[RMDB]
RNA sequence: GGGAACGACUCGAGUAGAGUCGAAAACAGGCAUCGCCGCCCGGGAGGAGCUGGCCAGAGAGACGGGCCUCCCGGAGUCCAGGAUUCAGAUCUGGUUUCAGAAUCGAAGGGCCAGGCACCCGGGACAGUACUGUAUGGGAUUCGUCCCAUACAGUACAAAAGAAACAACAACAACAAC
Reactivity to 2A3 in 0.01 (KOAc 150mM, MgCl2 10mM, bicine 150mM(pH8.5), 24C), signal-to-noise 2, nucleotides 027 to 126: c010a000g030g000c000a120u130c120g000c060c010g030c020c000c010g000g000g000a070g030g030a100g170c030u020g000g000c000c010a030g070a000g000a010g020a150c040g000g000g050c050c010u100c010c030c030g020g000a000g010u000c020c030a000g000g090a120u200u250c090a040g080a200u050c010u050g080g000u060u090u130c050a060g050a130a150u050c020g040a060a030g060g000g000c020c000a000g050g040c040a020c000c010c010g000g010g020a000c010a040
Reactivity to DMS in 0.01 (KOAc 150mM, MgCl2 10mM, bicine 150mM(pH8.5), 24C), signal-to-noise 3, nucleotides 027 to 126: c120a100g020g020c050a090u010c090g030c020c030g000c060c020c000g030g010g010a070g020g020a110g000c010u010g010g000c010c020a140g020a250g020a100g000a110c090g020g010g000c010c020u000c020c020c020g000g000a110g020u020c020c030a090g000g000a100u000u000c130a110g000a090u000c050u010g000g000u000u000u000c020a080g010a080a120u000c030g000a200a110g010g000g000c010c010a020g010g000c050a090c000c000c020g010g010g010a090c120a090

This 177-nucleotide RNA was probed chemically with 2A3 and DMS. For DMS, 2,121 sequencing reads were counted. Values cover nucleotides 27 to 126. For DMS the reverse transcriptase was MarathonRT. For 2A3, 2,336 sequencing reads were counted.